[RMDB]
RNA sequence: GGGAACGACUCGAGUAGAGUCGAAAAGUUAUGGAAAACGUCUUAGCUACCACUACAACAACAAUGCUGGACGGUGAUGGUUCGACUUACUCGAAUCCAUCACGUAGUGGUAGUCGUUCCCAUUCAACGGAAAGCAAUCUUUCGAGAUUGCUUUCCGAAAAGAAACAACAACAACAAC
Reactivity to 2A3 in 0.01 (KOAc 150mM, MgCl2 10mM, bicine 150mM(pH8.5), 24C), signal-to-noise 2, nucleotides 027 to 126: g030u130u050a120u300g150g070a080a050a030a010c010g000u030c060u130u160a020g050c010u020a020c010c040a010c020u030a020c010a160a000c000a040a050c010a080a270u170g040c050u100g090g020a030c080g000g000u010g000a010u010g020g060u000u000c010g000a030c080u110u130a080c040u080c010g000a000a030u000c010c000a000u000c010a000c030g000u040a010g000u010g000g000u000a000g000u000c000g010u000u000c010c000c000a010u080u090c000a040a030
Reactivity to DMS in 0.01 (KOAc 150mM, MgCl2 10mM, bicine 150mM(pH8.5), 24C), signal-to-noise 1, nucleotides 027 to 126: g000u010u020a030u010g000g000a140a060a070a020c050g000u000c020u000u020a090g000c000u000a020c010c010a000c030u010a020c050a060a090c160a030a130c190a120a110u000g040c020u000g010g000a040c070g020g020u000g000a010u000g000g000u000u000c000g000a050c250u000u000a060c270u000c000g000a010a000u060c020c010a000u000c030a010c020g010u000a000g030u000g000g000u000a030g010u000c000g000u000u000c000c000c010a060u000u000c220a100a150
The data come from the RNA Mapping Database (RMDB), library M2PK90.
Chemical mapping of a 177-nucleotide RNA with 2A3 and DMS.
The RNA was probed in 150 mM KOAc, 10 mM MgCl2 and 150 mM bicine (pH 8.5) at 24 C.
2A3 adducts were read by reverse transcription with SuperScript II with manganese.